[RMDB]
RNA sequence: GGGAACGACUCGAGUAGAGUCGAAAAUGCCAUGCGCUACGGAACCAUCCCCAUCGCGCACGCCACUGGCGGCCUUCGAGACACCAUCCAGGACUACUCCCCCUACGCCAGCGAGCCGUCGGGCAAGUCAUGUUAGCGUCUUCGGACGCUAACAUGAAAAAGAAACAACAACAACAAC
Reactivity to DMS in 0.01 (KOAc 150mM, MgCl2 10mM, bicine 150mM(pH8.5), 24C), signal-to-noise 1, nucleotides 027 to 126: u000g020c010c000a050u010g000c040g040c000u020a100c120g030g020a090a120c090c050a220u000c050c050c000c040a060u010c170g060c060g010c040a050c100g000c090c020a050c080u000g030g000c020g010g000c020c050u030u000c090g000a040g050a100c070a100c070c040a110u010c080c020a030g030g000a150c000u000a150c060u000c000c010c020c010c010u000a060c100g000c010c060a070g040c040g010a140g020c050c030g030u000c050g000g000g000c100a120a070g000
An RNA of 177 nucleotides, treated with DMS and read out base by base. Conditions: 150 mM KOAc, 10 mM MgCl2 and 150 mM bicine (pH 8.5), 24 C. The data come from the RNA Mapping Database (RMDB), library OK2TST.